RNA sequence: GGGAACGACUCGAGUAGAGUCGAAAACAACAGCGUAAUCGUGGCUUGACGUGAUCGAGCCACGAUUGCCUGAAUGGUAACUAUAUUGUCUGUCAUAGACAAUACGCUGUUCUAAUGACAGUAGGACGAUAUAGUGUUAUUUCGAUAGUACUAUAUCAAAAGAAACAACAACAACAAC
Reactivity to 2A3 in 0.01 (KOAc 150mM, MgCl2 10mM, bicine 150mM(pH8.5), 24C), signal-to-noise 9, nucleotides 027 to 126: c020a010a010c010a000g030c040g120u030a000a000u010c000g000u010g010g010c010u010u010g010a010c060g270u160g050a250u020c000g000a000g000c000c000a000c000g000a000u000u000g000c000c000u000g020a030a080u090g040g030u070a030a000c020u010a020u010a030u080u050g020u000c010u030g060u040c020a040u040a030g000a000c000a010a010u100a050c070g010c040u040g010u080u000c010u050a100a080u080g010a000c000a010g050u070a060g060g030a010c040
Reactivity to DMS in 0.01 (KOAc 150mM, MgCl2 10mM, bicine 150mM(pH8.5), 24C), signal-to-noise 9, nucleotides 027 to 126: c040a080a150c010a010g010c190g020u000a000a000u000c000g020u000g000g010c000u000u000g000a030c090g020u040g010a150u000c010g010a010g000c000c000a000c000g000a000u000u000g010c000c010u000g000a080a090u010g000g000u020a090a060c040u010a030u000a020u000u000g000u000c000u000g000u010c070a030u020a020g000a020c020a040a090u040a070c240g010c130u010g000u030u010c040u010a070a070u010g000a010c000a120g010u030a100g010g000a050c060